The record gives the reactivity of an RNA of 177 nucleotides to DMS and 2A3. The data come from the RNA Mapping Database (RMDB), library TTRDEL.

[RMDB]
RNA sequence: GGGAACGACUCGAGUAGAGUCGAAAAGAUAUGGACUGUCUACUCAGCUAUGAAGUCGGAAACGAUGGAGCUGGUGUAGAGCAGUCCUAAGUCAAAACGAGUCGAUGCCUUCGGGCAUCGACUCGAACUUUACAAAGAUGUUCGCAUCUUUGUAAAGAAAAGAAACAACAACAACAAC
Reactivity to DMS in 0.01 (KOAc 150mM, MgCl2 10mM, bicine 150mM(pH8.5), 24C), signal-to-noise 1, nucleotides 027 to 126: g000a060u000a300u000g000g000a030c000u000g010u000c000u000a000c000u000c000a010g000c000u000a300u020g010a080a180g030u000c000g010g000a150a170a180c000g000a000u010g000g000a000g040c000u010g010g020u030g010u010a000g000a040g020c010a010g000u000c000c020u000a010a060g010u020c020a080a060a150a240c020g010a000g010u020c040g000a010u000g000c010c000u010u010c220g030g010g010c010a010u000c000g000a000c000u000c000g010a000a050
Reactivity to 2A3 in 0.01 (KOAc 150mM, MgCl2 10mM, bicine 150mM(pH8.5), 24C), signal-to-noise 1, nucleotides 027 to 126: g060a010u080a090u140g000g010a000c000u000g040u070c000u000a000c010u000c000a010g000c010u080a300u300g050a040a010g010u000c020g050g070a080a080a050c010g000a000u020g010g060a000g080c010u030g000g190u170g040u030a020g040a040g000c010a000g010u000c000c000u000a000a000g040u010c010a000a070a000a200c050g010a000g120u000c020g030a010u010g000c050c060u040u130c300g110g000g000c130a030u000c050g020a000c000u010c000g020a000a010
The reactions ran in a buffer of 150 mM KOAc, 10 mM MgCl2 and 150 mM bicine (pH 8.5), at 24 C.
2A3 adducts were read by reverse transcription with SuperScript II with manganese.
For DMS the reverse transcriptase was MarathonRT.